[RMDB]
RNA sequence: GGGAACGACUCGAGUAGAGUCGAAAAUGGUGGCUCCAUCUUAGCCCUAGUCACGGCUAGCUGUGAAAGGUCCGUGAGCGGCAUGACUGCAGAGAGUGCUGAUACUGGCCUCUCCGCAGAUCAUGUAUCGCAUUUAUUAGUUCGCUAAUAAAUGCGAAAAAGAAACAACAACAACAAC
Reactivity to DMS in 0.01 (KOAc 150mM, MgCl2 10mM, bicine 150mM(pH8.5), 24C), signal-to-noise 5, nucleotides 027 to 126: u000g000g010u010g000g010c020u020c020c010a060u010c140u000u010a060g000c000c000c020u000a030g000u000c000a020c020g010g000c130u000a020g000c100u020g000u000g000a080a120a100g010g010u000c000c000g000u000g000a050g010c100g010g000c000a000u010g000a030c000u000g000c010a030g000a010g000a020g010u010g040c010u000g010a220u020a140c210u010g010g010c000c000u000c000u000c000c020g010c020a000g000a070u000c000a010u000g010u000a070
Reactivity to 2A3 in 0.01 (KOAc 150mM, MgCl2 10mM, bicine 150mM(pH8.5), 24C), signal-to-noise 6, nucleotides 027 to 126: u090g000g010u030g010g010c120u170c240c010a180u100c130u100u140a010g000c000c000c000u010a000g010u000c000a000c010g010g000c020u010a010g000c090u080g060u050g280a160a100a050g120g010u000c010c000g000u010g010a020g010c030g030g010c000a000u010g000a000c000u010g000c000a000g000a000g000a000g010u270g000c000u030g030a180u120a300c120u150g020g000c010c000u000c000u000c000c000g000c000a000g000a040u000c000a000u000g000u010a070